The record gives the reactivity of an RNA of 177 nucleotides to DMS.
[RMDB]
RNA sequence: GGGAACGACUCGAGUAGAGUCGAAAAUGAAAGUAGUCUCCUGCAGCGUCUGGGGUUUCCGUUGCAGUCCUCGGAACCAGGACCUCGGCGUGGCCUAGCGAGUUAUGGCCACGAAGGCCGUGAAAAACACAUGGGUGGAGUUCGCUCCACCCAUGUGAAAAGAAACAACAACAACAAC
Reactivity to DMS in 0.01 (KOAc 150mM, MgCl2 10mM, bicine 150mM(pH8.5), 24C), signal-to-noise 2, nucleotides 027 to 126: u000g000a120a080a100g040u020a080g000u030c030u000c040c060u020g020c050a100g020c070g010u000c030u030g000g000g010g010u000u000u000c020c010g010u000u000g010c060a100g010u000c080c040u000c090g030g010a050a080c130c030a150g020g000a030c010c000u000c050g020g010c020g020u010g000g020c000c020u000a140g020c110g000a100g000u010u010a080u010g000g010c000c010a010c030g020a070a060g020g030c030c020g010u020g000a040a080a050a090a120